[RMDB]
RNA sequence: GGGAACGACUCGAGUAGAGUCGAAAAACUGAUCGAAAGUUGAAUGCUAUCAUCAAAUACGAAUACUGAAACAGUCUUUCUGAAACCAUGUAUUCCAUUCAAACUGGUUUCCUUCAACGUUCGUACACGGUCCCUGAUACUUCGGUAUCAGGGACCGAAAAGAAACAACAACAACAAC
Reactivity to 2A3 in 0.01 (KOAc 150mM, MgCl2 10mM, bicine 150mM(pH8.5), 24C), signal-to-noise 2, nucleotides 027 to 126: a000c100u100g070a120u030c000g000a030a040a000g000u000u000g000a010a000u030g000c040u120a050u010c000a000u060c010a000a170a160u200a030c030g000a000a000u030a000c030u060g100a120a270a100c000a030g100u070c080u100u300u120c000u040g050a130a060a060c000c000a050u250g000u100a050u020u060c060c030a030u150u200c050a000a090a090c040u010g000g010u030u000u000c010c000u000u000c000a000a000c010g020u010u000c000g040u090a050c140a000